[RMDB]
RNA sequence: GGGAACGACUCGAGUAGAGUCGAAAACAGGACGAGCAUGGGGGUCCCCACUGAUGCCCGAGACGGUGCCCCUGUGUGUGUGAGCCCUCGACCCACAUAACAGAGAGGUGUCCUGAUGCCCUCUGUCCUUCGAUAAUCCGUUCGCGGAUUAUCGAAGAAAAGAAACAACAACAACAAC
Reactivity to DMS in 0.01 (KOAc 150mM, MgCl2 10mM, bicine 150mM(pH8.5), 24C), signal-to-noise 1, nucleotides 027 to 126: c090a030g000g000a130c000g020a150g010c040a000u010g010g000g030g000g030u010c200c020c040c140a110c080u000g010a140u000g000c020c010c010g010a080g020a120c110g010g060u000g010c000c010c000c000u000g020u000g020u000g030u020g010u010g000a110g010c010c000c000u000c010g010a110c010c010c020a090c170a070u000a140a070c040a040g000a050g000a100g000g000u000g010u000c020c040u000g010a190u000g020c000c000c000u000c000u000g010u000c150
Reactivity to 2A3 in 0.01 (KOAc 150mM, MgCl2 10mM, bicine 150mM(pH8.5), 24C), signal-to-noise 1, nucleotides 027 to 126: c010a020g030g000a010c020g070a020g040c010a010u030g000g000g010g020g010u060c050c070c010c030a030c050u050g010a150u200g090c000c070c080g020a020g020a030c090g000g000u010g000c000c000c010c010u000g000u000g010u010g000u000g040u080g130a070g070c000c000c020u030c050g240a200c000c120c000a040c000a080u260a140a020c010a040g050a020g020a060g070g000u020g050u060c030c010u070g040a120u150g000c000c000c000u000c000u030g020u080c030
Chemical mapping of a 177-nucleotide RNA with DMS and 2A3. For 2A3 the reverse transcriptase was SuperScript II with manganese. Values cover nucleotides 27 to 126. Source: RMDB library OK2TRN, as collected in RNAgym.